[RMDB]
RNA sequence: GGGAACGACUCGAGUAGAGUCGAAAAAAACGCAGCCGGCAUCGUAGACCCACCUAAUUUAUCAUAAUGCGCAAGCAGAGACGGAAGUGCCACAAACAAACGGAGAAGGUACUCCAAUGGUAAUACACUAGUUACGCAGGUUCGCCUGCGUAACUAGAAAAGAAACAACAACAACAAC
Reactivity to 2A3 in 0.01 (KOAc 150mM, MgCl2 10mM, bicine 150mM(pH8.5), 24C), signal-to-noise 2, nucleotides 027 to 126: a000a000a000c080g000c000a000g020c000c000g000g030c050a010u000c000g000u070a010g110a090c000c000c000a010c000c000u150a210a150u070u100u230a080u060c010a020u070a190a010u070g000c060g000c050a090a020g000c000a010g060a010g050a150c060g000g010a040a020g040u000g030c000c050a030c030a040a110a000c040a000a060a000c080g000g000a030g080a160a050g040g000u040a030c000u000c000c000a030a060u020g010g000u010a040a030u010a130c020a040
Reactivity to DMS in 0.01 (KOAc 150mM, MgCl2 10mM, bicine 150mM(pH8.5), 24C), signal-to-noise 2, nucleotides 027 to 126: a040a070a090c080g000c060a020g000c040c000g000g030c020a040u010c030g000u000a030g000a090c030c000c000a060c070c090u000a000a030u000u040u020a000u010c050a010u080a030a110u000g000c030g000c070a140a050g000c000a090g000a150g000a070c180g000g000a050a050g000u000g060c000c030a100c050a080a080a050c270a080a070a170c110g000g010a060g020a100a050g000g010u020a010c010u000c040c010a120a030u000g030g010u020a010a000u070a050c180a070